[RMDB]
RNA sequence: GGGAACGACUCGAGUAGAGUCGAAAACGAUAAUUCCUUUGAUGUUUCCCAGCCAGGGAUUGUCAUCCUCAAGUCUCUUGAUUUUCUUCCUUGUCUUCCGGAGGUCCCUCUCGAGUUCCUCUAACCUUUUUCUUCCAUUCACCCACUGCUCGAGAAUCAGUCAUUAGUAGUUCGCUACUAAUGACUGAAAAGAAACAACAACAACAAC
Reactivity to 2A3 in 0.01 (KOAc 150mM, MgCl2 10mM, bicine 150mM(pH8.5), 24C), signal-to-noise 6, nucleotides 027 to 156: c050g000a010u040a060a060u090u090c010c000u100u090u190g100a110u090g070u040u070u040c000c010c010a010g030c080c060a030g010g000g010a020u000u050g020u020c000a050u070c010c030u060c060a060a090g110u030c040u030c000u130u110g070a090u140u080u100u020c020u070u040c000c000u060u070g060u130c020u080u030c040c030g040g000a030g030g040u020c020c000c010u020c000u010c020g040a050g040u030u030c000c010u020c040u040a090a120c010c000u070u070u020u060u040c040u090u050c040c010a080u050u080c050a090c040c010c010a050c060u040g010c000u010c010g020a020g000a030a070u010

Source: RMDB library VIROID, as collected in RNAgym. The record gives the reactivity of an RNA of 207 nucleotides to 2A3. The 2A3 profile rests on 5,762 reads.